[RMDB]
RNA sequence: GGGAACGACUCGAGUAGAGUCGAAAAUUAAUGCGGCUUUAAGUUGACGAGGGCAGGGUUUAUCGAGACAUCGGCGGGUGCCCUGCGGUCUUCCUGCGACCGUUAGAGGACUGGUAAACCAAUUUAAGUACCAUUGUGAAUUCGUUCACAAUGGUACAAAAGAAACAACAACAACAAC
Reactivity to 2A3 in 0.01 (KOAc 150mM, MgCl2 10mM, bicine 150mM(pH8.5), 24C), signal-to-noise 2, nucleotides 027 to 126: u070u050a080a060u120g040c030g010g010c000u020u130u180a100a040g050u050u090g090a010c040g010a050g060g000g000c050a020g030g000g000u020u130u070a100u040c070g030a040g020a080c040a080u080c050g010g000c050g040g040g020u020g030c010c020c030u000g030c020g020g000u010c000u070u030c020c030u030g000c050g020a040c000c000g000u030u040a050g010a080g070g030a040c040u030g000g080u080a070a050a020c020c000a030a060u170u110u100a140a030
Reactivity to DMS in 0.01 (KOAc 150mM, MgCl2 10mM, bicine 150mM(pH8.5), 24C), signal-to-noise 3, nucleotides 027 to 126: u000u000a050a060u000g000c060g000g000c040u000u000u020a040a100g020u020u000g010a060c060g010a090g000g000g010c060a050g010g000g020u000u010u010a050u010c070g000a090g010a110c150a090u000c060g010g020c060g010g020g000u010g000c020c010c000u000g010c020g010g000u000c020u010u010c070c040u000g030c150g000a030c010c010g020u000u010a030g020a090g020g010a080c080u000g010g000u000a050a060a100c040c030a060a080u010u000u000a060a160
Chemical mapping of a 177-nucleotide RNA with 2A3 and DMS. For 2A3, 1,842 sequencing reads were counted. The DMS profile rests on 2,861 reads. It was measured as part of the RMDB library M2PK90.